[RMDB]
About this RNA
An RNA of 177 nucleotides, treated with DMS and 2A3 and read out base by base. The DMS profile rests on 2,650 reads. The data come from the RNA Mapping Database (RMDB), library OK1LIB. For DMS the reverse transcriptase was MarathonRT. The 2A3 profile rests on 1,542 reads.
RNA sequence: GGGAACGACUCGAGUAGAGUCGAAAAGACUACAUCACAGUAAAAAAAGGGGUUACUCAGGGAAUAUAUCAAUGUAGUGGAGGUGGUUGGUGUGGGCCCUGUUACGAUAAAGCUGUUCACUCCUCGACCCGAUGAUUAUGUUCGCAUAAUCAUCGGGAAAAGAAACAACAACAACAAC
Reactivity to DMS in 0.01 (KOAc 150mM, MgCl2 10mM, bicine 150mM(pH8.5), 24C), signal-to-noise 2, nucleotides 027 to 126: g050a090c020u000a090c090a070u000c110a040c150a160g000u060a000a000a110a090a060a060a000g010g000g000g040u000u000a030c120u050c050a070g020g030g060a140a070u020a040u010a130u000c240a070a040u000g000u000a180g010u010g000g020a050g000g000u000g000g030u020u030g010g000u000g000u000g000g010g000c040c000c010u000g080u000u030a070c120g000a080u050a040a080a130g010c070u030g000u030u020c110a120c110u020c010c000u000c140g000a190
Reactivity to 2A3 in 0.01 (KOAc 150mM, MgCl2 10mM, bicine 150mM(pH8.5), 24C), signal-to-noise 3, nucleotides 027 to 126: g000a070c060u160a030c030a110u190c030a030c100a160g140u270a110a110a060a050a000a000a080g010g000g000g000u070u030a090c060u020c060a030g060g000g000a160a000u120a020u050a000u180c060a130a070u140g040u170a070g030u060g020g030a030g000g040u160g050g110u170u050g000g020u030g000u160g060g010g040c020c000c000u050g020u060u110a010c000g000a000u170a050a050a000g060c020u030g030u050u070c030a040c020u020c000c000u030c040g040a070